[RMDB]
RNA sequence: GGGAACGACUCGAGUAGAGUCGAAAAUGCUGACGUGCAAUUUAGAAAAUACAGUUGAAGUUGUCAGGUGUUGGAGGGUAGGAUGGUAAUUUUCAGCACCAGUCUUAUUUUGAGGUUUAAUGAACAAGACCCAGUAUAAGUUCGCUUAUACUGGGUCAAAAGAAACAACAACAACAAC
Reactivity to DMS in 0.01 (KOAc 150mM, MgCl2 10mM, bicine 150mM(pH8.5), 24C), signal-to-noise 2, nucleotides 027 to 126: u000g020c000u010g020a060c100g010u020g000c030a060a050u000u010u000a120g010a070a070a070a050u010a080c140a070g010u020u000g020a060a210g010u000u010g010u000c050a060g010g020u010g020u010u010g000g000a030g010g000g020u020a050g000g000a030u000g000g000u020a040a040u000u000u010u000c140a060g000c090a040c040c030a110g020u020c020u010u000a060u010u000u010u000g000a080g010g010u010u000u020a050a070u000g000a070a090c130a090a170